[RMDB]
RNA sequence: GGGAACGACUCGAGUAGAGUCGAAAAGCGCUAGCUUCGGUCGAGGCGUCGGUGGGAUACUACCCUGGCUGUAUUGAAAUUCUAACCCGCGCCCCUUAUCGGGGCGGGAGACAGUGUCAGGCGGGCACGUCGAUUAUAGCUUCGGCUAUAAUCGACGAAAAGAAACAACAACAACAAC
Reactivity to DMS in 0.01 (KOAc 150mM, MgCl2 10mM, bicine 150mM(pH8.5), 24C), signal-to-noise 1, nucleotides 027 to 126: g000c030g010c070u010a050g000c050u010u000c100g040g020u010c010g010a120g000g000c050g020u000c080g040g010u010g010g020g010a140u000a040c090u010a110c140c020c010u000g000g010c020u000g010u020a160u030u030g010a070a080a140u000u000c070u000a160a140c040c000c000g000c030g000c000c000c000c020u010u010a120u000c210g000g010g010g020c000g000g000g000a030g090a030c120a010g030u000g000u020c020a070g030g010c070g000g000g010c150a120